[RMDB]
RNA sequence: GGGAACGACUCGAGUAGAGUCGAAAAUGAGAUGGCUGAAUAGUUCAUCUAAUUUGAAAUACUUUGGUGUCACAUGGACCUUUUCCUGAAUACCAUGGCUAUGUACUCACUAUUUGGCCAAAUGCUGAAAAUGAACAUAUAUUUGCCUCCGUCAAAACCGGUAUUUACUGUUCGCAGUAAAUACCGGAAAAGAAACAACAACAACAAC
Reactivity to 2A3 in 0.01 (KOAc 150mM, MgCl2 10mM, bicine 150mM(pH8.5), 24C), signal-to-noise 5, nucleotides 027 to 156: u140g010a030g030a030u090g010g000c020u030g020a020a050u060a060g020u070u090c050a060u080c100u110a100a120u100u100u140g100a070a080a020u110a070c060u090u050u030g040g010u030g040u060c050a050c050a230u050g070g050a200c040c020u070u090u190u110c020c030u020g040a050a040u080a110c030c010a050u030g030g000c060u040a020u100g060u080a080c030u020c140a010c020u020a010u010u020u020g000g010c000c000a010a050a080u100g010c060u060g070a010a060a080a110u110g050a110a020c040a030u130a010u030a070u160u070u060g000c010c020u020c020c010g090u100c030a040a090a020a050
Reactivity to DMS in 0.01 (KOAc 150mM, MgCl2 10mM, bicine 150mM(pH8.5), 24C), signal-to-noise 2, nucleotides 027 to 156: u000g010a090g030a130u010g000g020c040u000g010a090a080u010a050g010u000u000c030a010u000c010u000a040a080u000u030u000g000a110a080a070u000a070c070u000u000u030g020g010u000g000u000c070a100c080a110u020g090g000a140c210c050u000u000u000u000c000c030u000g010a110a090u000a050c000c030a040u010g000g090c060u000a040u000g000u010a000c120u000c050a090c020u000a140u000u000u000g000g040c000c040a100a080a080u020g010c090u000g000a030a050a070a080u000g000a050a060c030a090u000a240u000a140u000u000u000g020c000c050u000c020c000g070u000c050a040a020a070a180